[RMDB]
RNA sequence: GGGAACGACUCGAGUAGAGUCGAAAACGGUACCAACUGCCAAACUUGCUUCGGGCUAGAGACCUCAACGUGCAGGCGGCCAAGUGAUUCAGUUGGCAAUCCGCGGUUCUCAAGCCUCUACAUCGGACAACUGCACUUCUUUCGAGAAGUGCAGUUGAAAAGAAACAACAACAACAAC
Reactivity to DMS in 0.01 (KOAc 150mM, MgCl2 10mM, bicine 150mM(pH8.5), 24C), signal-to-noise 2, nucleotides 027 to 126: c050g000g020u020a130c030c010a000a030c010u000g040c220c040a090a100a060c110u000u010g020c070u000u010c140g030g010g000c050u000a080g000a100g030a140c040c060u000c070a080a130c120g000u000g020c080a040g010g030c250g000g000c180c030a000a030g010u000g000a200u000u000c010a020g000u010u000g010g010c050a010a060u010c000c040g020c010g010g000u000u010c000u000c010a150a150g000c100c040u000c080u020a060c140a060u030c080g000g000a300
Reactivity to 2A3 in 0.01 (KOAc 150mM, MgCl2 10mM, bicine 150mM(pH8.5), 24C), signal-to-noise 1, nucleotides 027 to 126: c000g000g000u050a040c010c010a020a020c060u010g020c080c050a060a090a070c040u020u030g040c010u070u100c160g060g050g050c060u040a050g070a060g050a300c000c020u030c040a110a170c150g080u110g040c020a030g000g050c000g020g010c020c000a050a020g100u100g040a080u110u030c020a030g030u010u000g030g000c000a020a060u060c000c000g010c020g090g000u050u050c000u020c020a080a060g030c030c000u040c020u110a060c030a160u040c060g080g000a050
The data come from the RNA Mapping Database (RMDB), library OK2TRN. The record gives the reactivity of an RNA of 177 nucleotides to DMS and 2A3. The RNA was probed in 150 mM KOAc, 10 mM MgCl2 and 150 mM bicine (pH 8.5) at 24 C. 2A3 adducts were read by reverse transcription with SuperScript II with manganese. For DMS the reverse transcriptase was MarathonRT. For 2A3, 1,040 sequencing reads were counted.